Conditions: 150 mM KOAc, 10 mM MgCl2 and 150 mM bicine (pH 8.5), 24 C. The record gives the reactivity of an RNA of 177 nucleotides to DMS and 2A3. For 2A3, 1,466 sequencing reads were counted.

[RMDB]
RNA sequence: GGGAACGACUCGAGUAGAGUCGAAAAGACCGUUAGUUCGCUAACGGUCAAAUAAAAUCAGCGGAAACGAGGCGUAAAAUAUUACCGCUGAACGCCUCGUUAAAAACAGGAGCUUCGGCUCCUGUAAUACCUAAGUCAGUUUCGACUGACUUAGGUAAAAAGAAACAACAACAACAAC
Reactivity to DMS in 0.01 (KOAc 150mM, MgCl2 10mM, bicine 150mM(pH8.5), 24C), signal-to-noise 2, nucleotides 027 to 126: g000a020c000c000g030u000u000a000g010u000u020c240g040c000u000a000a000c000g000g010u000c000a000a020a050u010a060a060a120a090u000c040a080g020c090g020g000a060a060a040c010g000a020g010g000c000g020u000a040a050a080a130u000a110u010u010a150c040c040g020c070u010g010a050a030c000g000c000c000u010c000g010u000u000a030a060a070a080a030c000a000g000g010a020g000c000u000u030c170g040g000c000u000c000c000u000g000u010a000a060
Reactivity to 2A3 in 0.01 (KOAc 150mM, MgCl2 10mM, bicine 150mM(pH8.5), 24C), signal-to-noise 1, nucleotides 027 to 126: g010a000c000c000g000u000u000a020g020u030u050c220g000c090u000a000a000c000g000g020u000c000a000a010a000u040a000a010a000a100u080c060a050g020c040g090g060a050a010a000c010g000a010g000g000c010g040u050a030a100a010a110u220a060u090u140a040c010c020g030c050u020g030a000a000c000g000c000c030u000c000g000u010u030a010a020a020a000a050c000a010g000g000a000g000c020u070u140c180g100g000c010u000c000c000u000g000u000a000a000
Description:
2A3 adducts were read by reverse transcription with SuperScript II with manganese. DMS (dimethyl sulfate) methylates the pairing face of unpaired adenines and cytosines. The DMS profile rests on 2,406 reads.